[RMDB]
RNA sequence: GGGAACGACUCGAGUAGAGUCGAAAAGAUAUGGAGAAUUAGGGCGCAACAGCUGAGUCGGAAACGACUCAGACAUGCGUUUCCUACUGUUCUCCUAAGUCAAAAGGUUAUGGUUCGCCAUAACCAACGCGUAUGAAUGGUUCGCCAUUCAUACGCGAAAAGAAACAACAACAACAAC
Reactivity to 2A3 in 0.01 (KOAc 150mM, MgCl2 10mM, bicine 150mM(pH8.5), 24C), signal-to-noise 1, nucleotides 027 to 126: g040a010u100a090u200g000g020a010g000a000a030u060u050a030g030g050g000c000g010c030a050a150c070a250g050c050u010g000a000g000u000c000g000g040a040a040a090c010g010a000c000u000c010a000g010a010c000a010u040g000c030g010u020u180u040c010c000u030a100c140u070g050u060u120c000u000c020c010u030a230a040g060u010c030a030a020a070a200g030g000u000u030a010u020g060g060u060u100c300g020c090c000a000u000a000a000c000c000a000a000
Reactivity to DMS in 0.01 (KOAc 150mM, MgCl2 10mM, bicine 150mM(pH8.5), 24C), signal-to-noise 2, nucleotides 027 to 126: g000a010u010a300u010g010g000a000g040a060a000u000u000a060g010g000g010c000g040c010a000a040c290a270g040c010u000g010a030g020u010c020g010g010a180a160a250c010g010a000c000u000c000a020g000a000c160a300u010g000c000g010u000u000u010c000c000u020a030c300u000g010u050u050c000u000c000c000u010a020a060g000u040c030a060a080a230a020g000g000u030u000a040u000g000g000u000u000c300g100c090c000a010u000a000a000c000c000a060a030

Structure probing data (2A3 and DMS) for a 177-nucleotide construct.
For 2A3, 2,456 sequencing reads were counted.
The DMS profile rests on 1,029 reads.
Values cover nucleotides 27 to 126.